[RMDB]
RNA sequence: GGGAACGACUCGAGUAGAGUCGAAAAUCUUUGGGCAAGCCAAUGGGCGUACGAUUUCGCCCAAACAAAUCAUCGCAAAAUUGAAGGAGCUUUAAAAUGGCGUUUAAUUAUGAUGAAUAUUUGCGUGAACGACUACAGGAUUCGUCCUGUAGUCGUUAAAAGAAACAACAACAACAAC
Reactivity to 2A3 in 0.01 (KOAc 150mM, MgCl2 10mM, bicine 150mM(pH8.5), 24C), signal-to-noise 1, nucleotides 027 to 126: u020c070u030u030u050g050g010g000c140a050a010g140c090c000a090a110u030g080g000g010c010g030u040a000c070g120a150u000u110u130c000g000c010c000c000a010a030a000c000a010a010a010u060c020a010u010c000g060c090a090a240a090a130u000u060g020a030a010g220g110a090g050c010u070u110u230a070a040a010a050u100g030g000c000g000u010u080u090a050a010u000u000a050u200g020a030u070g070a100a000u080a150u040u040u000g020c070g020u050g050
Reactivity to DMS in 0.01 (KOAc 150mM, MgCl2 10mM, bicine 150mM(pH8.5), 24C), signal-to-noise 2, nucleotides 027 to 126: u000c010u010u000u000g010g010g020c030a040a090g060c070c050a090a120u000g000g000g010c020g010u000a060c190g000a210u010u000u000c040g000c000c000c000a050a060a070c140a030a110a150u000c080a010u010c000g020c160a040a030a050a030u000u000g010a050a050g020g020a280g020c020u000u000u000a050a040a110a120u000g020g000c010g000u010u000u000a020a030u010u000a130u000g000a050u010g000a070a120u010a130u000u000u000g010c080g020u000g000
The record gives the reactivity of an RNA of 177 nucleotides to 2A3 and DMS. For 2A3, 666 sequencing reads were counted. Conditions: 150 mM KOAc, 10 mM MgCl2 and 150 mM bicine (pH 8.5), 24 C. It was measured as part of the RMDB library OK2TST. The DMS profile rests on 1,208 reads.